RNA sequence: GGGAACGACUCGAGUAGAGUCGAAAACAGCCGGAUAAGCAUUGGCUUCGCAAAGUAGACUGGGUAUUAGUAGCCACUAUAGCUGUUUUAGCAAUUUUCAGUGUUCUGCUUAUUAACUCGGCAAUGGUAGUGCAGCUUGAUUCGUCAAGCUGCACUAAAAAGAAACAACAACAACAAC
Reactivity to DMS in 0.01 (KOAc 150mM, MgCl2 10mM, bicine 150mM(pH8.5), 24C), signal-to-noise 2, nucleotides 027 to 126: c120a160g010c030c010g010g000a080u010a080a030g000c010a180u000u000g010g000c020u000u010c150g070c110a040a120a100g020u000a030g010a100c050u000g000g000g000u000a060u000u000a030g010u000a050g000c300c030a040c140u000a040u000a080g010c030u000g040u000u010u030u000a050g020c090a110a100u010u010u030u020c080a010g060u010g000u000u000c150u010g000c010u000u000a020u000u000a090a120c060u000c020g010g010c000a100a100u020g000g000
Reactivity to 2A3 in 0.01 (KOAc 150mM, MgCl2 10mM, bicine 150mM(pH8.5), 24C), signal-to-noise 1, nucleotides 027 to 126: c000a010g000c050c020g000g040a090u050a010a050g000c040a010u070u180g010g030c000u050u060c070g040c150a140a110a020g090u080a130g030a140c090u070g030g000g160u050a040u120u000a020g030u030a000g030c000c020a030c010u160a060u130a220g010c010u040g300u130u090u070u120a030g000c050a050a070u010u000u020u260c050a000g000u000g090u070u100c030u030g030c010u060u000a010u060u090a110a040c040u040c060g090g050c050a050a090u100g170g000